[RMDB]
RNA sequence: GGGAACGACUCGAGUAGAGUCGAAAAGAUAUGGACCUGAAGCACCGAUAAGCAUCCCUCGGAAACGAGGGAAUGCUUUUGACGGUGCCAGGUCCUAAGUCAAAACAGGUAACUUCGGUUACCUGAACCUCUACUCUUAGUUCGCUAAGAGUAGAGGAAAAGAAACAACAACAACAAC
Reactivity to 2A3 in 0.01 (KOAc 150mM, MgCl2 10mM, bicine 150mM(pH8.5), 24C), signal-to-noise 5, nucleotides 027 to 126: g010a000u010a010u060g000g000a000c010c020u040g070a260a030g030c000a000c010c020g180a300u100a300a010g000c000a010u010c000c000c000u000c000g000g000a030a020a000c020g000a010g000g000g000a000a010u010g010c000u000u000u020u090g070a030c000g000g000u000g000c000c000a000g000g000u000c000c000u000a000a000g000u000c010a010a020a080a150c020a000g000g000u010a000a000c010u060u230c300g150g000u050u000a000c000c000u000g000a010a030
Reactivity to DMS in 0.01 (KOAc 150mM, MgCl2 10mM, bicine 150mM(pH8.5), 24C), signal-to-noise 5, nucleotides 027 to 126: g010a020u000a070u010g000g000a020c000c000u000g010a270a240g010c000a000c010c000g010a110u010a010a010g010c000a020u000c000c000c000u000c000g030g010a020a010a030c010g000a010g000g000g010a000a000u000g000c000u000u000u000u000g010a240c090g020g000u000g000c010c000a000g000g010u000c000c000u000a000a040g000u000c010a120a080a140a280c010a010g010g000u000a000a010c000u000u020c220g030g000u000u000a010c010c000u000g000a050a090